RNA sequence: GGGAACGACUCGAGUAGAGUCGAAAAAACGAGUUGCUGACAAGCAAGCGGAAAGACUGUACUCUCGCUGACACCUUCCGCGCAACAAAACUCUAGCCAGCGAUAGUAAUGCAGCCGCGUUACACUCUAGUGGGGUAUCAUUCGUGAUACCCCACUAAAAAGAAACAACAACAACAAC
Reactivity to 2A3 in 0.01 (KOAc 150mM, MgCl2 10mM, bicine 150mM(pH8.5), 24C), signal-to-noise 3, nucleotides 027 to 126: a000a000c120g000a050g020u020u000g040c040u150g080a150c070a100a010g040c010a050a070g010c000g050g000a030a160a030g050a040c070u010g030u120a040c020u020c030u020c010g050c050u020g010a010c000a110c050c000u020u060c040c000g020c050g020c110a030a000c010a030a130a040a050c040u030c010u090a070g040c020c020a000g000c000g020a030u040a020g030u030a060a020u070g030c040a030g080c080c040g000c050g000u000u010a040c070a020c090u040c020
Reactivity to DMS in 0.01 (KOAc 150mM, MgCl2 10mM, bicine 150mM(pH8.5), 24C), signal-to-noise 3, nucleotides 027 to 126: a060a050c070g020a050g000u000u000g000c000u000g080a150c300a090a110g040c060a080a120g010c000g000g020a080a030a070g030a170c150u000g000u010a070c050u010c070u000c000g020c060u000g000a060c020a090c100c020u010u000c000c000g000c080g020c140a080a170c100a010a010a080a070c020u010c050u000a040g000c080c010a010g000c060g010a040u000a040g000u010a060a060u050g010c010a040g020c100c110g000c070g020u020u000a070c040a030c060u000c070
The record gives the reactivity of an RNA of 177 nucleotides to 2A3 and DMS. 2A3 adducts were read by reverse transcription with SuperScript II with manganese. Conditions: 150 mM KOAc, 10 mM MgCl2 and 150 mM bicine (pH 8.5), 24 C. The 2A3 profile rests on 1,729 reads. The data come from the RNA Mapping Database (RMDB), library OK1LIB. DMS (dimethyl sulfate) methylates the pairing face of unpaired adenines and cytosines.